The record gives the reactivity of an RNA of 177 nucleotides to 2A3 and DMS. It was measured as part of the RMDB library OK2TRN. The RNA was probed in 150 mM KOAc, 10 mM MgCl2 and 150 mM bicine (pH 8.5) at 24 C. Values cover nucleotides 27 to 126. 2A3 adducts were read by reverse transcription with SuperScript II with manganese.

[RMDB]
RNA sequence: GGGAACGACUCGAGUAGAGUCGAAAACAUGUGACAGGUGGAGGUCCUGAGGCACCACUGGGAGCUUGUGAGCGGAUGGGCGUCUUCCAGAACGCACUCUGCAGGCACUCGGCAACGUGAAGUGUUCCCACAUAUAGCAGUUCGCUGCUAUAUGUGGAAAAGAAACAACAACAACAAC
Reactivity to 2A3 in 0.01 (KOAc 150mM, MgCl2 10mM, bicine 150mM(pH8.5), 24C), signal-to-noise 5, nucleotides 027 to 126: c030a040u090g040u080g150a050c050a070g070g010u060g050g070a100g030g040u070c030c040u120g050a200g050g000c010a010c040c010a010c040u040g030g030g020a030g010c050u080u050g040u050g080a030g020c040g020g050a070u070g090g050g000c020g040u030c030u200u020c020c010a030g050a090a010c020g000c000a030c020u050c010u030g000c000a050g070g000c010a010c030u020c030g030g000c040a060a040c060g040u070g070a090a040g050u030g040u140u050c000
Reactivity to DMS in 0.01 (KOAc 150mM, MgCl2 10mM, bicine 150mM(pH8.5), 24C), signal-to-noise 8, nucleotides 027 to 126: c070a050u010g010u000g010a130c110a090g010g030u000g010g010a120g020g010u000c030c060u010g000a140g020g010c040a080c040c040a090c060u010g010g000g000a100g020c070u010u000g010u000g020a240g020c030g000g020a080u010g010g000g000c040g000u000c030u000u000c150c160a080g000a090a050c050g020c020a050c030u000c020u000g010c020a080g010g000c030a060c030u000c030g010g000c080a050a060c090g020u000g000a060a090g010u010g000u000u000c050